[RMDB]
RNA sequence: GGGAACGACUCGAGUAGAGUCGAAAAUGGAGCUUGUGACUCAAAUAUAAGCUGCAGAGGGGCUGGAACUCGCCAGCUACAGAGUCCAGGGGCACAUGGUGGACAUGUACAAGGUAUUGACACCAAGUCCUCUGAGUCACUGUGAGGUUUAAAUCCAUCCCCUAUCACUAUUCGUAGUGAUAGGGGAAAAAGAAACAACAACAACAAC
Reactivity to DMS in 0.01 (KOAc 150mM, MgCl2 10mM, bicine 150mM(pH8.5), 24C), signal-to-noise 1, nucleotides 027 to 156: u000g010g010a070g030c010u010u020g060u000g020a090c040u000c030a190a110a150u000a120u000a070a060g000c010u000g040c000a070g000a120g030g000g000g010c000u000g000g010a020a070c070u000c090g030c040c040a140g000c000u010a040c020a070g000a090g010u000c020c030a070g010g020g010g000c080a020c020a060u010g000g000u000g000g000a140c020a070u030g050u000a120c030a170a200g050g000u030a070u000u000g010a110c010a050c010c010a040a160g000u000c010c020u000c020u010g000a110g000u000c000a000c010u020g000u000g000a060g000g000u000u000u000a030a170a110u000c000c010a220
Reactivity to 2A3 in 0.01 (KOAc 150mM, MgCl2 10mM, bicine 150mM(pH8.5), 24C), signal-to-noise 2, nucleotides 027 to 156: u110g040g000a020g080c030u050u020g020u050g090a080c040u030c150a000a070a000u180a010u010a000a060g010c000u070g020c030a020g040a050g090g000g000g000c020u020g000g040a060a000c060u050c110g010c010c010a000g000c000u020a030c000a040g040a010g000u000c010c020a000g030g000g010g020c190a050c020a040u010g000g030u000g000g040a060c040a110u110g020u060a070c120a220a050g210g000u030a030u050u080g020a010c000a000c000c010a000a000g000u000c000c010u000c010u010g040a040g010u000c000a000c070u020g010u010g100a060g000g050u060u100u110a060a100a090u120c080c000a020
The record gives the reactivity of an RNA of 207 nucleotides to DMS and 2A3. The RNA was probed in 150 mM KOAc, 10 mM MgCl2 and 150 mM bicine (pH 8.5) at 24 C. For DMS the reverse transcriptase was MarathonRT. It was measured as part of the RMDB library OK3TST. For 2A3, 756 sequencing reads were counted. For DMS, 1,955 sequencing reads were counted. For 2A3 the reverse transcriptase was SuperScript II with manganese.